[RMDB]
An RNA of 177 nucleotides, treated with 2A3 and DMS and read out base by base. The reactions ran in a buffer of 150 mM KOAc, 10 mM MgCl2 and 150 mM bicine (pH 8.5), at 24 C. The 2A3 profile rests on 1,192 reads.
RNA sequence: GGGAACGACUCGAGUAGAGUCGAAAAUCGUACCCGCGGAUUCCCCUUAUCAGAACCUCAAGGACUUCGUGGAGGAUGCCAAGAAGCGGCCCGGGCAGAUCAACGUGGCGAAUGCAGGGGCGGGAGGCGCCCCUAGGUGAUUCGUCACCUAGGGGCGAAAAGAAACAACAACAACAAC
Reactivity to 2A3 in 0.01 (KOAc 150mM, MgCl2 10mM, bicine 150mM(pH8.5), 24C), signal-to-noise 1, nucleotides 027 to 126: u020c000g010u000a090c000c000c040g010c010g070g040a060u010u030c000c000c000c060u070u050a120u170c070a090g080a110a070c010c040u090c050a070a120g040g030a080c050u030u010c060g010u040g010g010a020g040g020a040u090g040c000c000a080a050g050a050a050g020c040g030g000c040c000c000g000g010g010c010a030g050a070u100c060a050a080c040g020u030g050g000c040g060a040a020u060g020c030a010g000g000g000g010c010g030g050g000a020g070g000
Reactivity to DMS in 0.01 (KOAc 150mM, MgCl2 10mM, bicine 150mM(pH8.5), 24C), signal-to-noise 2, nucleotides 027 to 126: u010c040g010u010a120c050c000c020g010c050g010g000a120u000u000c020c010c020c190u000u000a050u010c080a110g000a130a140c040c010u020c030a150a190g000g010a100c090u000u000c020g010u000g000g010a040g000g000a090u010g000c020c010a050a100g010a080a060g010c040g000g020c040c030c030g000g000g020c050a050g000a100u010c070a060a090c100g020u000g010g010c040g000a090a080u000g020c090a050g010g010g010g020c040g010g000g010a100g000g010